[RMDB]
RNA sequence: GGGAACGACUCGAGUAGAGUCGAAAAUGCGUCAUGCCGAGUUGGGCAUGGGGAGACCAGACGUGAAUUCCUCUGGAUACUCCAACGGGUAAUAUACCACACAAGGUGUGUUUCGCCGUUCCGCUUCACUUAGUGAAAAGUUCGCUUUUCACUAAGUAAAAGAAACAACAACAACAAC
Reactivity to 2A3 in 0.01 (KOAc 150mM, MgCl2 10mM, bicine 150mM(pH8.5), 24C), signal-to-noise 6, nucleotides 027 to 126: u120g000c000g010u010c010a000u010g000c000c010g110a160g300u290u170g150g050g000c000a000u000g000g000g000g010a010g020a080c000c000a000g010a010c030g060u080g110a160a140u170u050c010c000u000c010u000g030g050a130u130a190c000u000c000c010a000a010c010g010g000g000u000a020a000u020a010u010a020c000c020a040c020a010c040a190a120g020g000u000g000u000g010u010u020u020c180g030c060c000g000u020u000c020c010g000c000u110u110c040
Reactivity to DMS in 0.01 (KOAc 150mM, MgCl2 10mM, bicine 150mM(pH8.5), 24C), signal-to-noise 9, nucleotides 027 to 126: u010g020c010g020u000c000a000u000g010c000c010g010a220g030u010u010g020g010g010c000a010u000g000g000g010g010a010g030a170c000c000a010g010a020c120g010u000g010a200a160u010u000c020c090u000c000u000g000g000a110u000a060c010u000c000c000a040a020c010g010g000g000u000a010a010u000a020u000a020c000c000a100c210a140c300a130a100g000g010u000g020u000g010u000u000u000c030g010c000c010g000u000u000c040c010g000c020u000u000c130